Annotation: Conditions: 150 mM KOAc, 10 mM MgCl2 and 150 mM bicine (pH 8.5), 24 C. An RNA of 177 nucleotides, treated with DMS and read out base by base. It was measured as part of the RMDB library VIROID. For DMS, 1,310 sequencing reads were counted. DMS adducts were read by reverse transcription with MarathonRT.
RNA sequence: GGGAACGACUCGAGUAGAGUCGAAAAUAGUAGCCGAAGCGACAGCGCAAAGGGGGCGAGGGGUGGUCCUGCGGGCGCGAGGAAGGACACCCGAAGAAAGGAAGGGUGAAAACCCUGUUUCGGCGGGCAUACGCAAUGAGUUCGCUCAUUGCGUAUGAAAAGAAACAACAACAACAAC
Reactivity to DMS in 0.01 (KOAc 150mM, MgCl2 10mM, bicine 150mM(pH8.5), 24C), signal-to-noise 2, nucleotides 027 to 126: u000a110g020u000a050g040c010c030g000a090a170g040c060g000a090c090a090g020c020g030c040a060a100a230g000g010g010g050g010c060g000a100g010g000g000g010u010g020g010u000c050c020u000g050c090g000g020g000c060g020c060g000a050g010g000a070a050g000g000a080c090a130c000c000c000g000a070a080g000a040a020a070g000g000a100a030g010g000g000u000g000a060a080a130a100c010c000c010u000g000u000u000u000c020g000g000c020g000g000g000